[RMDB]
RNA sequence: GGGAACGACUCGAGUAGAGUCGAAAACGACUGGAUGCCGUCGGCCGCCUCGCGGCGCAGCAGGGCUUCGACCUCUUGCGGGACGAUCGAGCCUCCAAAGAUGCGGGCAAACGCAUCGCCAACCGUCCUGUGGGAAACGAUUCGUCGUUUCCCACAGAAAAGAAACAACAACAACAAC
Reactivity to 2A3 in 0.01 (KOAc 150mM, MgCl2 10mM, bicine 150mM(pH8.5), 24C), signal-to-noise 5, nucleotides 027 to 126: c020g070a020c030u050g040g020a030u040g020c010c000g050u060c030g070g020c010c020g020c010c050u080c080g040c060g010g000c020g010c030a010g010c020a060g020g060g030c040u110u070c040g170a210c000c010u020c010u020u070g010c070g010g000g070a070c020g010a020u110c030g000a020g020c010c020u030c020c030a020a060a040g030a010u020g000c010g010g030g120c210a190a110a000c000g010c000a000u000c010g000c000c020a050a070c060c050g060u060c010
Reactivity to DMS in 0.01 (KOAc 150mM, MgCl2 10mM, bicine 150mM(pH8.5), 24C), signal-to-noise 2, nucleotides 027 to 126: c030g000a150c090u010g000g010a050u010g010c010c070g010u000c000g010g000c000c010g000c010c090u000c220g030c080g040g000c070g050c110a050g000c080a100g000g000g010c040u030u000c040g030a180c010c030u000c020u000u020g010c080g010g020g010a050c090g000a060u010c080g080a160g000c030c060u000c050c070a090a040a150g020a050u000g030c030g000g010g000c110a060a170a260c050g010c000a000u010c000g000c070c010a000a080c150c050g000u020c070